Description:
The record gives the reactivity of an RNA of 207 nucleotides to 2A3 and DMS. Values cover nucleotides 27 to 156. For DMS the reverse transcriptase was MarathonRT. 2A3 adducts were read by reverse transcription with SuperScript II with manganese.
RNA sequence: GGGAACGACUCGAGUAGAGUCGAAAACGAAGGCUGUCAGGAUACCCAGCUGAUGACCAGCAAGAAGCAGAUGCAGGAUAUCCACGGCUGGCUCAUCAACCGCGCCGAAGAACUCGCCGCAAUCCGUGGUCGGUGGUCCCGUGGGUCCGUCGAGCUGCACGUUGAGAUCAUUCGUGAUCUCAACGUGAAAAGAAACAACAACAACAAC
Reactivity to 2A3 in 0.01 (KOAc 150mM, MgCl2 10mM, bicine 150mM(pH8.5), 24C), signal-to-noise 4, nucleotides 027 to 156: c060g050a060a010g070g010c020u040g030u080c030a040g040g010a040u110a210c030c010c010a030g030c030u030g000a100u070g030a040c010c030a010g030c040a060a050g090a100a020g020c030a030g000a060u120g050c060a040g050g030a040u050a080u080c000c030a000c000g040g030c080u150g030g000c070u090c160a040u010c000a010a020c000c010g000c020g040c080c090g010a050a010g040a060a040c040u080c100g120c100c040g120c080a050a090u090c040c030g040u040g020g000u010c020g030g000u010g000g020u030c030c020c000g000u020g000g000g000u010c000c000g030u070c030g020a040g030c020u020g000
Reactivity to DMS in 0.01 (KOAc 150mM, MgCl2 10mM, bicine 150mM(pH8.5), 24C), signal-to-noise 2, nucleotides 027 to 156: c070g000a100a240g030g020c000u000g040u010c000a090g000g030a190u000a040c040c050c020a280g040c000u020g030a070u000g020a050c040c000a120g000c060a060a130g020a150a170g010c050a070g000a130u000g040c080a150g000g020a090u000a030u020c010c020a010c010g020g000c030u000g020g000c040u000c040a010u020c010a010a020c010c020g030c030g010c110c050g010a090a100g020a080a200c080u000c060g030c030c080g060c090a070a110u000c030c040g080u000g040g050u000c010g050g050u010g020g020u000c000c000c020g000u000g010g000g000u000c010c030g010u000c040g000a100g040c040u010g020
The reactions ran in a buffer of 150 mM KOAc, 10 mM MgCl2 and 150 mM bicine (pH 8.5), at 24 C.
The DMS profile rests on 3,849 reads.